Conditions: 150 mM KOAc, 10 mM MgCl2 and 150 mM bicine (pH 8.5), 24 C. An RNA of 177 nucleotides, treated with DMS and read out base by base. For DMS the reverse transcriptase was MarathonRT. For DMS, 1,049 sequencing reads were counted.
RNA sequence: GGGAACGACUCGAGUAGAGUCGAAAAGAUAUGGAAGCGUAACAAAGCGAAGAACGUGGCAACAGCUGGCUAUAUCGGAAACGAUAUAGCCCGAAUCCACGGGAGCUUUGGAGAAGCUUCCUAAGUCCUACCAAUGUAGCUUCGGCUACAUUGGUAGAAAAGAAACAACAACAACAAC
Reactivity to DMS in 0.01 (KOAc 150mM, MgCl2 10mM, bicine 150mM(pH8.5), 24C), signal-to-noise 2, nucleotides 027 to 126: g000a030u030a060u000g020g000a030a010g000c000g010u000a120a300c000a000a010a000g020c000g020a120a260g020a200a300c040g030u000g000g000c300a070a110c300a160g000c180u010g010g000c010u020a020u000a000u000c000g010g030a040a020a070c010g030a030u000a000u000a000g000c000c010c010g000a010a210u010c000c000a020c000g000g000g040a010g040c000u000u000u000g000g020a060g020a090a240g010c000u010u000c000c000u000a020a060g000u000c010